[RMDB]
RNA sequence: GGGAACGACUCGAGUAGAGUCGAAAAGCCAUAACGCGUGUACAACUACACAUUGUCCUAUAAUAUUGUCUGAUAAAAAACAGUGUAGAAAUAUUCUGACAGGGAAAUAGCAAAUGUAUUAAUUUAACUUACCUUGCAAUCUCUCUUAAUGGAGCCAAUUUAGUGCGUAUUUCGAUACGCACUAAAUAAAAGAAACAACAACAACAAC
Reactivity to DMS in 0.01 (KOAc 150mM, MgCl2 10mM, bicine 150mM(pH8.5), 24C), signal-to-noise 1, nucleotides 027 to 156: g050c000c050a150u010a100a140c110g020c090g040u010g000u000a220c040a050a220c030u000a070c030a000c010a140u000u000g030u000c020c070u000a160u010a050a120u010a070u000u000g000u000c060u000g030a200u020a000a070a160a080a120a070c000a090g010u000g020u010a040g010a060a050a100u000a050u000u010c030u000g010a150c070a050g010g000g000a000a070a070u000a090g020c030a010a030a070u000g010u000a140u000u010a060a110u000u010u000a080a070c080u000u000a100c010c030u000u010g010c030a090a060u000c010u000c000u000c010u010u000a050a090u000g000g000a150g020c090c080a040
Reactivity to 2A3 in 0.01 (KOAc 150mM, MgCl2 10mM, bicine 150mM(pH8.5), 24C), signal-to-noise 3, nucleotides 027 to 156: g000c000c010a110u110a040a080c070g020c060g070u070g060u090a040c030a120a040c120u010a000c000a030c030a080u060u090g040u020c020c040u130a110u080a280a170u100a180u130u120g080u040c060u040g120a110u260a070a130a000a000a000a000c020a010g000u020g010u030a010g040a080a040a010u120a030u070u070c020u070g030a070c010a020g030g010g010a000a040a070u140a090g000c000a000a000a040u050g050u060a150u190u110a150a090u050u080u030a040a000c000u010u020a030c010c000u010u010g000c010a000a070u000c000u000c000u000c020u090u130a040a020u150g040g020a010g010c020c000a000